[RMDB]
RNA sequence: GGGAACGACUCGAGUAGAGUCGAAAACCGAAUAAUUUCGGGCAGUCCUUGCCCGCGGAGGGCACUUAAGGCUCCGGGGCCCGGGGCAGAGUCGGCCCUCCCAGAGCCCGCCGACGCCCCCGAGCGCUGCAAUCUAUUAUUUCGAUAAUAGAUUGCAAAAAGAAACAACAACAACAAC
Reactivity to DMS in 0.01 (KOAc 150mM, MgCl2 10mM, bicine 150mM(pH8.5), 24C), signal-to-noise 4, nucleotides 027 to 126: c000c000g010a070a100u070a110a120u010u010u030c010g010g010g000c030a050g000u040c120c090u020u020g000c000c010c060g000c150g000g010a110g000g000g040c030a060c060u010u030a220a140g000g000c000u010c000c090g000g010g020g020c170c130c180g000g000g010g020c010a080g010a050g010u020c100g000g020c000c030c000u000c000c020c050a080g020a070g020c020c010c060g000c240c100g020a100c090g010c020c020c000c010c030g000a110g000c160g000c130
Reactivity to 2A3 in 0.01 (KOAc 150mM, MgCl2 10mM, bicine 150mM(pH8.5), 24C), signal-to-noise 3, nucleotides 027 to 126: c000c000g000a040a080u290a090a100u130u150u140c010g000g000g000c020a020g070u220c050c060u080u050g010c000c010c000g000c020g010g050a150g000g000g000c040a020c040u160u160a110a020g030g000c000u000c010c010g000g000g030g050c010c160c050g010g000g010g000c020a020g020a020g160u130c070g060g000c000c000c020u060c000c000c000a010g010a000g000c000c010c010g020c010c020g020a050c060g010c020c000c000c000c000g000a020g030c070g030c070